[RMDB]
RNA sequence: GGGAACGACUCGAGUAGAGUCGAAAAAGCCGAGGACUACGGUCCUCGGCAACAACCGUCACAACGGCUUCCUGGCGUGACGGGGUUAACCCCAACGGAGCAAGUGCGCGCUUACGAGCUCGCACAAUUUAGGAGAAUUCCUUCGGGAAUUCUCCAACUCUUAAACGCAGUUCGCUGCGUUUAAGAGAAAAGAAACAACAACAACAAC
Reactivity to 2A3 in 0.01 (KOAc 150mM, MgCl2 10mM, bicine 150mM(pH8.5), 24C), signal-to-noise 2, nucleotides 027 to 156: a000g000c020c000g010a010g000g000a010c010u040a040c290g060g000u020c000c010u010c000g000g050c000a000a000c000a000a000c000c000g010u000c000a010c010a030a020c060g090g020c020u200u170c030c020u080g040g020c000g000u000g000a000c000g000g000g010g000u120u150a090a080c030c010c000c010a070a030c110g010g030a020g020c020a160a060g040u000g010c020g000c000g000c000u030u030a060c210g160a050g020c000u010c010g000c020a000c020a020a020u140u120u170a080g010g010a010g000a010a000u010u010c000c020u000u090c200g030g030g000a000a000u010u000c000u010c000c000a000a000